[RMDB]
The record gives the reactivity of an RNA of 177 nucleotides to DMS and 2A3. For DMS the reverse transcriptase was MarathonRT. The 2A3 profile rests on 1,788 reads. The RNA was probed in 150 mM KOAc, 10 mM MgCl2 and 150 mM bicine (pH 8.5) at 24 C. The data come from the RNA Mapping Database (RMDB), library OK2TRN.
RNA sequence: GGGAACGACUCGAGUAGAGUCGAAAAGGGGACGUCCAAUGGCUGGCGCCCUGUGGCCACCCCUCAUGUCAAACGUUAGACGCCCACGGAACGGGAGAUCACGAGGGCCUGGAUGGACCUGAUCCUCUACCCUAAGUCUGUUCGCAGACUUAGGGUAAAAAGAAACAACAACAACAAC
Reactivity to DMS in 0.01 (KOAc 150mM, MgCl2 10mM, bicine 150mM(pH8.5), 24C), signal-to-noise 2, nucleotides 027 to 126: g000g000g000g030a130c050g020u000c000c010a100a160u000g020g030c090u020g000g020c070g040c040c030c080u000g000u010g000g010c010c030a130c190c020c010c000u000c010a040u030g030u010c000a000a300a300c050g010u000u020a080g000a160c110g000c010c010c060a080c050g000g000a030a020c040g000g000g010a300g000a030u000c080a020c040g000a020g020g010g000c280c080u000g030g000a070u000g010g000a140c010c030u010g000a090u000c010c000u000c150
Reactivity to 2A3 in 0.01 (KOAc 150mM, MgCl2 10mM, bicine 150mM(pH8.5), 24C), signal-to-noise 1, nucleotides 027 to 126: g080g000g020g000a000c000g000u010c000c010a030a120u120g070g000c050u020g030g080c060g070c060c000c020u060g050u060g010g050c010c000a030c000c000c000c020u010c020a030u100g010u050c020a040a040a020c050g010u020u010a130g050a150c090g140c010c040c040a060c060g070g010a040a020c020g010g020g000a030g010a020u170c060a030c140g010a000g030g020g040c030c060u030g000g000a020u020g020g000a000c010c000u010g020a030u000c000c010u010c030